[RMDB]
RNA sequence: GGGAACGACUCGAGUAGAGUCGAAAAUACGGAAGUCUGACAGUGUCCGGCCUAACGACGGACGCUGACGCGAAAGCGUGGUCUAGCGAACCAAUUAGGCUGCUUGAUGCGGCCAAUUGCUGACAGAUGAAGAAUUGGAUUUCGAUCCAAUUCUUCAAAAAGAAACAACAACAACAAC
Reactivity to DMS in 0.01 (KOAc 150mM, MgCl2 10mM, bicine 150mM(pH8.5), 24C), signal-to-noise 7, nucleotides 027 to 126: u030a100c090g010g000a090a080g010u010c040u000g010a240c010a000g010u000g000u000c000c000g000g010c060c090u020a120a130c300g000a050c010g010g000a030c000g000c000u000g000a030c010g010c000g010a090a080a120g000c010g020u010g010g010u010c020u010a100g000c050g000a200a120c140c000a040a050u010u010a120g020g010c000u000g010c000u010u030g010a100u040g010c000g010g000c000c000a000a000u020u010g000c080u010g000a120c130a070g000a200
Reactivity to 2A3 in 0.01 (KOAc 150mM, MgCl2 10mM, bicine 150mM(pH8.5), 24C), signal-to-noise 8, nucleotides 027 to 126: u210a030c070g050g050a080a030g050u030c050u050g070a040c000a010g010u010g010u010c000c000g000g070c030c030u150a180a060c120g070a000c000g020g000a000c000g000c000u000g010a020c010g020c010g050a130a030a010g020c020g030u060g030g020u020c030u050a020g030c010g030a030a050c010c000a010a010u030u030a100g000g000c000u000g000c000u080u190g110a090u300g010c000g000g010c000c000a000a010u020u030g000c020u040g050a060c020a060g120a110